[RMDB]
RNA sequence: GGGAACGACUCGAGUAGAGUCGAAAAUACGCGCAAGAGCCCCGAAUGCCGCUUCGUGCACCGGCGUACGCGGCCCCAUGCGGACCUCGCGGAUUACCUUUUCACCUUCGUAAAUUUCGGUGCGCGCAGCCAGCGCAUGAUCUCGCGCGAGCGCUGGCAUCAAGUGUCUAUUCGUAGACACUUGAUGAAAAGAAACAACAACAACAAC
Reactivity to 2A3 in 0.01 (KOAc 150mM, MgCl2 10mM, bicine 150mM(pH8.5), 24C), signal-to-noise 1, nucleotides 027 to 156: u040a000c010g020c010g000c020a070a070g050a080g160c040c040c050c020g100a110a060u110g040c010c000g010c080u010u030c020g010u010g020c000a030c020c010g070g000c030g040u030a030c030g000c020g010g000c000c030c010c030a140u210g000c160g090g010a110c020c000u020c050g000c010g010g010a060u080u170a160c000c000u110u050u090u160c120a180c040c020u130u130c110g060u090a010a080a260u120u180u160c000g000g000u020g010c010g020c010g000c000a010g020c000c010a000g000c020g000c020a010u080g040a080u040c070u050c070g010c010g020c000g000a020g000c010g000c010u010g000g000
Reactivity to DMS in 0.01 (KOAc 150mM, MgCl2 10mM, bicine 150mM(pH8.5), 24C), signal-to-noise 1, nucleotides 027 to 156: u010a050c000g010c000g060c020a100a120g020a190g020c030c000c020c050g030a150a080u000g010c010c050g000c040u010u020c060g030u000g000c000a070c090c040g010g030c130g000u030a060c040g010c090g000g060c020c010c020c040a220u010g020c050g040g050a040c000c030u000c010g050c040g080g000a170u000u000a040c040c030u010u010u010u000c100a090c080c070u010u000c050g000u000a080a060a130u010u010u000c010g010g000u000g010c030g010c020g020c090a110g000c000c020a100g040c030g030c010a120u000g000a090u000c040u000c000g000c060g030c010g030a170g020c010g010c010u000g000g010